[RMDB]
Background
An RNA of 177 nucleotides, treated with DMS and 2A3 and read out base by base. The data come from the RNA Mapping Database (RMDB), library OK1LIB. The RNA was probed in 150 mM KOAc, 10 mM MgCl2 and 150 mM bicine (pH 8.5) at 24 C. For DMS the reverse transcriptase was MarathonRT. For DMS, 3,460 sequencing reads were counted.
RNA sequence: GGGAACGACUCGAGUAGAGUCGAAAAUAGUGAUUCAAGUAGAAAACGACAAUAUGAUUGAUCCACAAUCCGCAAAUUAUAUAUAUGACCAUGUAGAUUCUGAUGACAAAGACAUCAAGUGGUAUAGCAUCAUUUGGGAGUUCGCUCCCAAAUGAUGAAAAGAAACAACAACAACAAC
Reactivity to DMS in 0.01 (KOAc 150mM, MgCl2 10mM, bicine 150mM(pH8.5), 24C), signal-to-noise 3, nucleotides 027 to 126: u040a060g000u010g000a070u010u000c060a010a120g020u010a060g000a050a110a170a110c170g010a080c150a080a040u010a040u010g000a020u030u000g040a030u000c050c040a050c040a030a070u020c000c060g000c170a030a070a090u050u070a060u050a100u040a090u010a100u030g020a000c010c000a000u000g000u020a200g010a050u000u000c000u000g010a000u010g000a130c300a060a070a040g030a040c080a000u000c020a000a190g000u000g000g000u000a050u020a070g000
Reactivity to 2A3 in 0.01 (KOAc 150mM, MgCl2 10mM, bicine 150mM(pH8.5), 24C), signal-to-noise 3, nucleotides 027 to 126: u150a010g030u010g130a080u050u080c090a080a020g050u100a040g090a080a200a120a070c060g140a060c100a090a110u070a090u270g130a170u040u000g030a020u070c000c010a020c010a070a070u010c010c040g110c160a050a060a060u260u030a060u020a000u000a000u000a030u190g060a020c000c020a030u000g100u150a030g020a050u140u070c020u010g080a090u060g020a010c060a060a080a030g010a000c030a040u000c010a000a200g010u030g010g000u080a030u070a090g010